This 177-nucleotide RNA was probed chemically with 2A3 and DMS.

[RMDB]
RNA sequence: GGGAACGACUCGAGUAGAGUCGAAAAGCGUCAUAUCGUUGACACUCCAAAAAAGACUGCAAAUUCCAAUUCGUUUCGGAAUACAGUCCGUCGACGAGAUGGGCGAUCGUCUAAUCUUCUCUCUGAGGUUUGAAAAUACAUUCGUGUAUUUUCAAACAAAAGAAACAACAACAACAAC
Reactivity to 2A3 in 0.01 (KOAc 150mM, MgCl2 10mM, bicine 150mM(pH8.5), 24C), signal-to-noise 9, nucleotides 027 to 126: g040c000g020u020c010a010u030a010u050c000g010u000u010g010a000c020a040c070u180c060c010a090a110a050a030a000a020g010a000c010u020g030c070a110a060a140u010u000c010c000a030a070u110u140c140g140u130u100u120c120g010g010a010a010u060a080c000a000g000u000c010c060g000u000c010g010a010c000g000a000g010a060u190g020g020g000c010g010a050u080c050g080u000c040u060a090a090u030c050u080u010c030u000c000u000c030u050g080a040g100
Reactivity to DMS in 0.01 (KOAc 150mM, MgCl2 10mM, bicine 150mM(pH8.5), 24C), signal-to-noise 6, nucleotides 027 to 126: g020c020g000u000c010a020u000a130u000c010g010u000u000g000a030c020a160c240u020c210c180a000a090a100a140a110a090g000a010c010u000g000c120a070a070a140u000u000c000c000a050a080u020u020c240g010u010u000u010c130g010g000a020a000u010a150c000a000g000u000c010c110g020u000c010g020a010c010g010a010g000a070u040g000g000g000c020g010a050u000c080g000u010c090u020a100a110u000c070u000u000c020u010c020u000c040u010g010a200g010
Record summary:
Source: RMDB libraries RFM100 and RFMREP, as collected in RNAgym. High 2A3 reactivity points to a flexible backbone, as in loops and unpaired stretches. For DMS the reverse transcriptase was MarathonRT. The RNA was probed in 150 mM KOAc, 10 mM MgCl2 and 150 mM bicine (pH 8.5) at 24 C.